[RMDB]
RNA sequence: GGGAACGACUCGAGUAGAGUCGAAAAACUGAACUUACGUAUAUUUUAUUUUCACUCCAGUUUGAGAGAGGAACAACAGAACAGUGUCGUGCUAGAAGACUUGUUGGAAAACAUGGAGGCAGACACCUUUGCAACCCUGUGCAGCCAGGUGAGAAGAGUCAUUUAUAAUGUUCGCAUUAUAAAUGACAAAAGAAACAACAACAACAAC
Reactivity to 2A3 in 0.01 (KOAc 150mM, MgCl2 10mM, bicine 150mM(pH8.5), 24C), signal-to-noise 5, nucleotides 027 to 156: a000c030u050g060a100a010c030u130u120a040c100g080u120a130u030a130u170u200u060u080a150u080u090u020u080c030a040c020u000c000c020a080g050u030u110u210g100a100g000a010g000a020g030g010a070a030c030a040a000c010a040g050a110a020c030a100g020u020g030u040c060g090u050g050c030u050a070g020a160a020g060a190c000u030u010g030u020u040g020g060a060a100a030a000c010a020u020g020g030a030g020g030c000a000g010a020c000a030c010c040u050u090u080g020c020a020a080c000c020c010u030g010u040g030c010a010g020c020c000a010g000g030u050g000a070g020a070a030g030a010
Reactivity to DMS in 0.01 (KOAc 150mM, MgCl2 10mM, bicine 150mM(pH8.5), 24C), signal-to-noise 3, nucleotides 027 to 156: a100c060u010g010a090a080c060u000u000a110c080g000u010a150u010a090u010u000u000u000a110u020u040u000u020c040a100c020u000c020c010a070g000u000u000u000g030a140g000a120g010a090g030g010a080a040c040a060a120c040a110g000a060a070c110a040g020u010g020u000c050g040u010g020c010u010a070g030a110a140g020a080c070u000u000g020u010u010g030g010a090a090a040a060c030a060u010g010g010a120g000g030c010a110g000a090c020a070c010c020u000u010u010g030c000a060a110c030c010c010u000g020u000g020c050a060g020c040c050a030g040g020u000g000a130g010a050a100g010a250

Conditions: 150 mM KOAc, 10 mM MgCl2 and 150 mM bicine (pH 8.5), 24 C.
Chemical mapping of a 207-nucleotide RNA with 2A3 and DMS.
It was measured as part of the RMDB library OK3TST.
2A3 adducts were read by reverse transcription with SuperScript II with manganese.
Reactivities are given for positions 27 through 156.
The 2A3 profile rests on 3,044 reads.
DMS adducts were read by reverse transcription with MarathonRT.